[RMDB]
RNA sequence: GGGAACGACUCGAGUAGAGUCGAAAAUAGUACAUGCAUGCUAGCUAGCAUGCUAGUGAGGUACAUCUAGCUCGUACGCGAUCUCGACGCAUCGUACUGCAGCUAGUCAGAUCGAUCCUAGUCGUAGAUAGUGCAUAGUCUUCGGACUAUGCACUAUAAAAGAAACAACAACAACAAC
Reactivity to DMS in 0.01 (KOAc 150mM, MgCl2 10mM, bicine 150mM(pH8.5), 24C), signal-to-noise 5, nucleotides 027 to 126: u000a120g010u000a010c020a160u010g010c020a010u000g000c000u000a180g020c170u010a120g010c040a010u010g010c000u000a010g000u000g010a070g020g010u000a010c020a100u010c010u000a010g000c000u000c040g010u010a050c060g010c080g010a070u010c060u010c120g010a060c100g030c200a090u020c070g010u000a030c040u010g030c130a030g000c030u010a020g000u000c130a060g010a120u000c070g010a080u000c020c000u000a060g010u000c020g020u010a090g010
Reactivity to 2A3 in 0.01 (KOAc 150mM, MgCl2 10mM, bicine 150mM(pH8.5), 24C), signal-to-noise 2, nucleotides 027 to 126: u070a000g050u040a010c030a070u090g030c000a000u030g000c010u010a150g080c030u040a010g040c070a010u040g010c000u010a010g050u070g090a120g070g130u020a020c010a040u020c010u010a000g010c000u000c040g030u010a010c050g010c070g090a100u020c090u020c080g140a080c060g020c050a080u280c060g030u000a040c020u070g040c030a010g000c000u030a000g010u020c050a030g000a040u060c010g000a010u010c010c020u050a040g040u020c030g040u020a070g030
Source: RMDB library OK2TRN, as collected in RNAgym.
Structure probing data (DMS and 2A3) for a 177-nucleotide construct.
2A3 is a SHAPE reagent: it acylates the 2'-hydroxyl of flexible nucleotides of all four kinds.